Structure probing data (DMS and 2A3) for a 177-nucleotide construct.
[RMDB]
RNA sequence: GGGAACGACUCGAGUAGAGUCGAAAACGUCGACCAAAGGCCGCAAGUACGGGUUAAGGGCGUCCAGACUUGGCUCAGAAGGGCCAGGGAUAAUACCCGCUAGGAAUAUAUUCUCAGGUUUGUAGCGGACCUACAUGAGGUUCGCCUCAUGUAGGUCAAAAGAAACAACAACAACAAC
Reactivity to DMS in 0.01 (KOAc 150mM, MgCl2 10mM, bicine 150mM(pH8.5), 24C), signal-to-noise 2, nucleotides 027 to 126: c030g010u020c040g010a140c070c080a030a110a160g000g030c040c010g010c110a070a110g020u020a140c120g000g010g000u000u000a050a060g010g000g000c060g000u000c010c040a070g050a160c030u000u010g000g000c060u020c000a090g000a220a160g000g000g010c000c020a010g020g040g000a130u000a060a060u020a160c070c010c000g000c050u010a050g000g000a100a050u000a170u040a060u080u000c020u020c040a100g000g010u000u000u010g000u000a040g010c060g000
Reactivity to 2A3 in 0.01 (KOAc 150mM, MgCl2 10mM, bicine 150mM(pH8.5), 24C), signal-to-noise 5, nucleotides 027 to 126: c010g040u020c010g040a060c000c030a010a040a080g140g030c020c030g000c100a080a040g040u130a100c070g030g010g040u080u160a050a040g080g030g000c020g010u030c030c030a020g010a040c000u030u040g000g030c000u020c040a190g110a300a300g060g000g000c000c000a010g030g000g020a050u120a150a070u120a160c000c000c000g000c010u050a050g030g060a060a020u060a010u000a070u290u030c020u040c020a000g020g190u050u120u080g190u070a030g020c030g020
The DMS profile rests on 2,925 reads.